[RMDB]
RNA sequence: GGGAACGACUCGAGUAGAGUCGAAAAGACUAGUAAGAGAAUCGGUUUAUAAAUAGUUAUUAUUUCAUAAUUUCUUCAACAUAAUUACCAAAUGCUAAGUCAUGUCCUUCUCGUUCCUGCCUCGGCACUUAAGGACUUAUUGUCAUAAUUUGGCAUACCGGUUUUAAAUGUUCGCAUUUAAAACCGGAAAAGAAACAACAACAACAAC
Reactivity to 2A3 in 0.01 (KOAc 150mM, MgCl2 10mM, bicine 150mM(pH8.5), 24C), signal-to-noise 1, nucleotides 027 to 156: g000a000c030u030a020g000u050a110a010g050a000g030a270a270u180c100g020g070u010u100u090a220u100a090a160a160u170a050g000u000u050a030u060u060a000u040u260u140c030a020u070a280a090u070u060u090c050u160u070c030a030a030c030a130u150a140a050u080u080a070c000c030a000a000a120u050g050c050u070a170a000g030u030c000a070u100g030u000c000c020u000u040c050u030c070g020u000u000c000c050u030g000c000c030u030c080g030g000c020a000c070u070u050a020a020g000g000a030c000u000u100a100u030u100g000u000c020a020u000a300a130u150u030u160g000g000c040a000u090a120
The record gives the reactivity of an RNA of 207 nucleotides to 2A3. Values cover nucleotides 27 to 156. The reactions ran in a buffer of 150 mM KOAc, 10 mM MgCl2 and 150 mM bicine (pH 8.5), at 24 C.